[RMDB]
RNA sequence: GGGAACGACUCGAGUAGAGUCGAAAAUCAUACAUGAGGGGAUGGCAGUACAGUUCGUGAUUCGUCUUGGUCCCCAAGGAGACUGAACACAGAAAGAUGAGUUAUGGAAACACUUAAGGUUUUUAAUGAGAACCAGUGAUACUGUUUAGAAGUGAGAAAUCGUGAAAAUGUUCGCAUUUUCACGAUUAAAAGAAACAACAACAACAAC
Reactivity to 2A3 in 0.01 (KOAc 150mM, MgCl2 10mM, bicine 150mM(pH8.5), 24C), signal-to-noise 3, nucleotides 027 to 156: u060c000a020u070a110c070a080u160g070a090g000g020g000g000a020u050g010g020c020a020g010u030a040c010a050g020u040u100c020g050u060g030a090u040u040c000g030u000c040u000u040g020g000u080c060c070c020c090a010a010g030g010a020g010a020c040u060g060a120a010c080a000c000a080g100a070a110a000g020a040u070g020a010g040u100u030a050u090g060g010a020a080a030c010a010c040u130u150a110a120g060g080u030u030u020u030u120a120a140u140g060a020g010a110a010c000c000a000g000u000g010a030u040a120c040u000g020u000u050u010a110g020a150a040g050u070g040a030g130a020
Reactivity to DMS in 0.01 (KOAc 150mM, MgCl2 10mM, bicine 150mM(pH8.5), 24C), signal-to-noise 2, nucleotides 027 to 156: u010c030a110u010a110c110a090u000g000a130g000g000g040g010a090u000g020g000c050a050g000u000a100c100a110g010u000u000c010g000u000g000a110u000u010c020g010u010c020u000u000g000g010u010c000c000c080c000a070a120g040g010a090g020a090c060u010g020a030a110c120a200c100a100g010a110a090a100g010a070u010g000a090g030u000u000a060u000g030g000a060a080a150c060a060c060u000u000a090a130g050g010u030u010u010u000u020a040a200u000g000a150g000a020a040c010c020a060g040u000g000a150u000a040c040u000g000u000u000u000a090g000a040a110g000u000g000a140g010a060